Overview
Chemical mapping of a 207-nucleotide RNA with DMS and 2A3. The RNA was probed in 150 mM KOAc, 10 mM MgCl2 and 150 mM bicine (pH 8.5) at 24 C. Values are in units of 0.01, from 0 to 300, in steps of 10.
RNA sequence: GGGAACGACUCGAGUAGAGUCGAAAAGUAUAGAAGCAUGAGACCGCAUGCGCUAUACGAUGAAUCUCGGUCGAAUCCGUUGUGCGAAAGCACUUCGGUAAUGCAUAUCGGUAGGCAGAUCGGCCCGGAUCAGCUACCGUAAUUAGUACGGGCAAGACGUAAUACUCCAGUUCGCUGGAGUAUUACGAAAAGAAACAACAACAACAAC
Reactivity to DMS in 0.01 (KOAc 150mM, MgCl2 10mM, bicine 150mM(pH8.5), 24C), signal-to-noise 2, nucleotides 027 to 156: g000u010a040u000a020g000a100a130g030c000a000u000g010a170g000a180c110c080g050c010a030u010g000c010g000c000u000a030u000a010c010g000a190u000g030a150a140u010c020u000c040g020g000u010c070g020a190a190u000c000c000g010u000u010g000u000g040c000g010a160a090a280g010c000a010c010u000u000c000g010g020u000a050a090u000g020c090a140u010a100u000c030g000g000u000a050g030g010c050a130g010a140u000c010g020g000c040c040c000g000g010a110u000c030a200g000c030u000a050c000c000g000u000a050a080u000u010a100g030u000a070c010g000g030g010c070a140a100g000a260
Reactivity to 2A3 in 0.01 (KOAc 150mM, MgCl2 10mM, bicine 150mM(pH8.5), 24C), signal-to-noise 5, nucleotides 027 to 156: g020u000a000u000a010g100a270a040g010c010a010u000g030a030g040a180c030c050g050c040a000u000g000c010g000c000u000a010u000a010c050g010a020u120g090a080a140u080c060u010c040g000g020u030c030g030a020a070u020c020c000g000u000u000g000u000g000c000g060a090a050a060g000c000a000c000u010u010c000g000g010u060a090a040u110g090c070a060u100a070u260c010g030g000u010a020g170g170c110a070g010a010u000c010g030g000c000c000c000g000g000a000u000c010a030g040c000u000a010c000c010g030u020a010a060u090u170a030g130u030a020c020g000g000g000c020a020a000g070a020
The data come from the RNA Mapping Database (RMDB), library OK3TST. 2A3 adducts were read by reverse transcription with SuperScript II with manganese.